Structure probing data (2A3) for a 207-nucleotide construct. The reactions ran in a buffer of 150 mM KOAc, 10 mM MgCl2 and 150 mM bicine (pH 8.5), at 24 C. Values cover nucleotides 27 to 156. Source: RMDB library M2RFPK, as collected in RNAgym. The 2A3 profile rests on 980 reads. 2A3 adducts were read by reverse transcription with SuperScript II with manganese.
RNA sequence: GGGAACGACUCGAGUAGAGUCGAAAAACGGUGCGGAAGUUCGCGCUUCCGUGAAACGCGAAAAUCGGACGGUGGCUGCAAGUCGCAUCGCAAAACCGCGGCAAGUGGAGUUAGCUAGAGGAGGCUGAAACCAUCCAACACUUCGGUGUUGGAUGAACCACAAGAAUUCCUUCGGGAAUUCUUGUGGAAAAGAAACAACAACAACAAC
Reactivity to 2A3 in 0.01 (KOAc 150mM, MgCl2 10mM, bicine 150mM(pH8.5), 24C), signal-to-noise 2, nucleotides 027 to 156: a010c020g020g000u020g010c030g020g020a030a030g020u100u090c080g040c000g010c050u050u020c000c000g020u040g060a160a090a000c100g040c020g050a060a010a000a140u100c020g020g010a040c020g060g010u010g040g010c100u080g010c040a020a060g040u070c020g030c080a050u060c040g010c040a070a080a000a030c040c030g010c000g060g000c040a070a040g030u070g070g020a070g000u080u070a000g030c040u020a020g000a030g020g020a020g020g000c030u030g040a030a060a040c000c000a000u010c010c000a000a000c000a000c010u040u050c260g060g000u000g000u000u000g000g000a000u000g000a000a000